An RNA of 207 nucleotides, treated with DMS and 2A3 and read out base by base. It was measured as part of the RMDB library OK3TST. The 2A3 profile rests on 2,998 reads. As a SHAPE reagent, 2A3 marks flexible, mostly unpaired nucleotides at the ribose 2'-OH. The RNA was probed in 150 mM KOAc, 10 mM MgCl2 and 150 mM bicine (pH 8.5) at 24 C. DMS adducts were read by reverse transcription with MarathonRT.
[RMDB]
RNA sequence: GGGAACGACUCGAGUAGAGUCGAAAAACAGGGUCAUAGGACAAUAGUGGAGAGAAGGUCAGCAGAUAAACCCGUGAACAAAGGUCUCUGGUUUUCCUAGGCAGAGGACCCUGCAGCCUUCCGCAGUGUUUGUGUCCCUGGGUACUUGAGAUUAGGGGAUACGCAGUUAUUUCGAUAACUGCGUAUCAAAAGAAACAACAACAACAAC
Reactivity to DMS in 0.01 (KOAc 150mM, MgCl2 10mM, bicine 150mM(pH8.5), 24C), signal-to-noise 2, nucleotides 027 to 156: a110c010a090g030g010g020u010c030a110u000a120g000g010a040c060a060a100u010a110g030u010g050g010a140g000a110g020a030a040g030g020u010c030a200g040c050a090g000a110u000a040a020a070c030c040c020g010u010g030a090a180c090a060a080a100g000g000u010c020u040c020u030g000g000u010u000u000u000c030c090u000a110g030g020c080a080g000a060g020g000a020c030c030c030u000g000c030a300g010c010c010u000u010c000c020g010c030a090g000u000g010u000u000u000g000u000g010u000c010c010c010u000g000g000g040u000a030c070u010u000g000a110g010a120u010u000a130g010g040g010
Reactivity to 2A3 in 0.01 (KOAc 150mM, MgCl2 10mM, bicine 150mM(pH8.5), 24C), signal-to-noise 3, nucleotides 027 to 156: a000c010a000g000g000g010u040c010a010u090a060g090g060a010c030a060a110u130a160g130u110g020g050a110g010a040g010a090a030g030g010u070c080a060g000c020a020g020a060u150a080a120a020c010c000c020g050u060g060a070a030c070a100a120a020g030g010u020c000u000c000u040g070g030u010u020u060u100c020c010u040a060g030g000c020a020g030a060g070g040a030c010c050c010u000g010c000a020g010c000c000u030u020c020c010g020c040a030g040u010g010u070u050u020g010u010g010u000c020c010c010u010g010g000g020u060a070c050u070u120g080a080g000a100u070u200a080g030g000g000